Chemical mapping of a 207-nucleotide RNA with 2A3.
2A3 adducts were read by reverse transcription with SuperScript II with manganese.
Reactivities are given for positions 27 through 156.
[RMDB]
RNA sequence: GGGAACGACUCGAGUAGAGUCGAAAAAGCGCGCAUACUACGGUACGCGCGCAAUCAGAAAUCGGGAAUGAUGUUCUCCCCUGGGAUUCCAAAACCGCUGUUUCGCUGAUGACGUCUGCUUUUUUAAUCACCACCGUUUGGUUCGCCAAACGGUGAACAAAACACCACACUUCGGUGUGGUGUUUUGAAAAGAAACAACAACAACAAC
Reactivity to 2A3 in 0.01 (KOAc 150mM, MgCl2 10mM, bicine 150mM(pH8.5), 24C), signal-to-noise 1, nucleotides 027 to 156: a000g000c000g050c000g000c030a030u010a010c010u020a010c290g040g040u010a020c000g030c000g030c000g000c020a000a000u010c020a020g120a070a080a090u110c020g050g010g050a060a090u120g100a080u140g080u120u000c010u050c010c010c010c010u040g020g030g050a140u100u120c050c000a030a050a040a060c050c020g020c050u030g060u070u030u030c030g000c010u020g020a060u020g080a110c030g060u000c000u000g030c030u080u120u020u010u020u270a090a130u120c050a030c110c000a000c000c010g020u000u000u000g000g000u010u030c120g050c080c010a000a000a000c000g000g000u000g000a000a000